[RMDB]
RNA sequence: GGGAACGACUCGAGUAGAGUCGAAAAUUCCCGGGCCUUGUACACACCGCCCGUCACACCACGGGAGUUGGGAGUACCCGAAGUAGGUUGCCUAACCGCAAGGAGGGCGCUUCCUAAGGUAAGACCGAUGACUGGGGUGAAGUCGUAACAAGGUAGCGCUAAGUACGAACUUCGGUUCGUACUUAGCAAAAGAAACAACAACAACAAC
Reactivity to 2A3 in 0.01 (KOAc 150mM, MgCl2 10mM, bicine 150mM(pH8.5), 24C), signal-to-noise 1, nucleotides 027 to 156: u010u000c000c000c030g000g050g000c000c000u000u000g030u000a020c040a000c020a030c040c040g160c030c010c000g100u100c000a080c030a020c010c000a020c030g030g000g020a090g010u050u080g030g020g000a020g040u020a020c000c000c020g020a150a030g000u100a010g010g120u130u300g100c010c050u260a200a170c000c000g070c110a020a050g000g000a000g000g000g000c010g000c000u000u000c060c000u000a080a110g000g000u000a010a010g030a050c020c020g020a040u060g050a040c020u080g000g000g000g000u000g090a120a050g040u060c110g000u010a060a000c000a000a000g020g000u000a060g040c030
Structure probing data (2A3) for a 207-nucleotide construct. The reactions ran in a buffer of 150 mM KOAc, 10 mM MgCl2 and 150 mM bicine (pH 8.5), at 24 C. It was measured as part of the RMDB library PDB130.